[RMDB]
RNA sequence: GGGAACGACUCGAGUAGAGUCGAAAAGCAGUCGCAAGAGCGGAGGGUAAUUAGGACAGGAUCCUAAUAAACCUGCGAGUGAGACGUUAAAAAAACUUCCACUGGCAAAACGCAGGCCAACAGUAACUAUAAUUUUUUAGUUCGCUAAAAAAUUAUAAAAAGAAACAACAACAACAAC
Reactivity to 2A3 in 0.01 (KOAc 150mM, MgCl2 10mM, bicine 150mM(pH8.5), 24C), signal-to-noise 5, nucleotides 027 to 126: g030c020a010g040u060c030g020c070a080a040g020a020g080c020g010g040a030g030g000g010u030a060a020u010u020a010g010g010a010c040a070g140g120a120u000c000c000u020a020a010u050a050a100a020c010c010u020g010c010g040a000g010u010g010a220g000a020c010g010u000u010a120a180a050a020a010a000a000c000u010u000c000c000a010c020u040g120g000c030a060a070a020a040c040g010c020a010g010g030c020c020a040a030c010a070g040u060a030a000c040
Reactivity to DMS in 0.01 (KOAc 150mM, MgCl2 10mM, bicine 150mM(pH8.5), 24C), signal-to-noise 5, nucleotides 027 to 126: g000c050a080g020u010c080g010c090a090a060g000a090g020c020g000g000a120g010g010g000u010a080a040u000u000a010g000g000a030c040a260g030g020a300u010c000c000u010a020a020u000a050a130a190c020c020u000g000c010g010a040g010u000g000a120g000a020c030g000u000u010a020a000a080a050a030a040a010c020u000u000c010c010a010c010u020g000g020c080a080a060a070a170c040g010c020a040g000g000c050c050a050a070c090a070g020u040a070a050c140